[RMDB]
RNA sequence: GGGAACGACUCGAGUAGAGUCGAAAAGACGAGCCGUGUUCAUACGUUGCUCGGCAAGAAGAUAGGAGUUGACGCUCUCAAAUUUUUCGAGUUCUUUCAAGCCUUCUUCGGCAUAACGAUAGGCAGCGUACUCCAACUAUUUCGAUAGUUGGAGUACAAAAGAAACAACAACAACAAC
Reactivity to 2A3 in 0.01 (KOAc 150mM, MgCl2 10mM, bicine 150mM(pH8.5), 24C), signal-to-noise 6, nucleotides 027 to 126: g080a000c010g000a000g020c000c010g020u040g060u140u230c150a120u130a240c020g050u070u130g000c000u000c000g000g020c030a050a050g030a010a000g020a040u180a080g040g030a070g060u030u050g070a020c030g010c020u000c010u000c020a080a140a150u160u180u020u060u100c050g020a030g050u020u020c030u030u100u030c070a050a010g030c000c000u020u050c020u020u020c020g030g000c060a140u120a200a040c040g060a060u120a140g080g000c020a020g030c020
Reactivity to DMS in 0.01 (KOAc 150mM, MgCl2 10mM, bicine 150mM(pH8.5), 24C), signal-to-noise 6, nucleotides 027 to 126: g010a150c020g000a010g010c000c010g010u000g020u000u010c260a110u010a040c020g020u010u000g010c010u000c030g010g020c090a080a080g020a040a060g000a060u000a080g000g010a070g000u000u000g020a090c300g010c010u000c000u010c040a060a070a190u000u010u000u010u010c080g010a050g000u000u000c050u010u010u000c050a030a090g010c000c000u010u000c040u000u000c010g000g000c120a080u000a070a060c080g010a100u010a050g010g010c040a100g020c130